An RNA of 177 nucleotides, treated with DMS and read out base by base. DMS adducts were read by reverse transcription with MarathonRT. For DMS, 1,688 sequencing reads were counted. It was measured as part of the RMDB library M2PK90. The reactions ran in a buffer of 150 mM KOAc, 10 mM MgCl2 and 150 mM bicine (pH 8.5), at 24 C.
RNA sequence: GGGAACGACUCGAGUAGAGUCGAAAAAAAAAGGAACUAUGUUCAGGCAUGAAGCCUCCACGUGCGUGCGAAAGGACCCGGAAACGGCUGAGCAUAGUUCCGAGCUGAAGGAGGCACGGCUCAAAAAUGUCUAUUAGAACUUCGGUUCUAAUAGACAAAAAGAAACAACAACAACAAC
Reactivity to DMS in 0.01 (KOAc 150mM, MgCl2 10mM, bicine 150mM(pH8.5), 24C), signal-to-noise 1, nucleotides 027 to 126: a010a050a070a040a140g010g010a000a000c000u000a000u010g000u000u000c000a020g020g010c000a000u000g000a040a040g020c020c000u000c000c000a240c000g020u000g020c000g050u000g000c000g040a070a080a180g000g000a010c010c020c010g000g000a050a050a150c020g020g010c000u000g000a000g000c010a010u000a010g010u000u000c000c010g000a000g030c010u000g020a050a030g020g010a000g020g030c040a280c010g000g000c010u040c010a000a070a090a070a100